Conditions: 150 mM KOAc, 10 mM MgCl2 and 150 mM bicine (pH 8.5), 24 C. This 177-nucleotide RNA was probed chemically with DMS and 2A3. The DMS profile rests on 1,654 reads. Source: RMDB library OK2TST, as collected in RNAgym. For 2A3 the reverse transcriptase was SuperScript II with manganese. For DMS the reverse transcriptase was MarathonRT.
RNA sequence: GGGAACGACUCGAGUAGAGUCGAAAAAGGUGAUGAGCGGCAACAUUACCGGAGUGAGAGCCACCACGGACAAUAUUCGGUGCGCCCAUCAAUACCUGUAAACCGAGUUGAUGAGAGGCGGUGGCGACGACCUUUUAGCAUUCGUGCUAAAAGGUCGAAAAGAAACAACAACAACAAC
Reactivity to DMS in 0.01 (KOAc 150mM, MgCl2 10mM, bicine 150mM(pH8.5), 24C), signal-to-noise 2, nucleotides 027 to 126: a050g000g020u000g020a030u000g000a080g000c000g010g010c050a040a080c100a060u010u000a100c040c040g000g000a120g000u010g010a140g010a200g000c030c000a020c020c020a110c030g010g010a220c070a060a060u010a160u000u000c030g020g000u000g020c060g000c000c010c010a020u010c020a080a060u010a100c030c000u000g010u020a060a090a040c040c000g000a060g010u010u000g000a130u000g010a060g000a220g000g000c040g010g020u000g000g010c060g010a170
Reactivity to 2A3 in 0.01 (KOAc 150mM, MgCl2 10mM, bicine 150mM(pH8.5), 24C), signal-to-noise 1, nucleotides 027 to 126: a000g090g050u030g000a050u050g010a050g020c030g120g010c030a050a050c040a150u150u110a070c060c030g000g070a030g020u140g040a100g000a000g040c000c000a000c000c000a050c040g060g090a000c060a080a000u070a070u150u050c000g020g000u070g050c020g000c040c010c000a040u080c030a070a200u070a190c060c000u080g120u190a050a060a000c000c000g000a000g050u040u200g080a250u140g040a060g070a100g120g000c020g020g000u030g000g000c000g030a010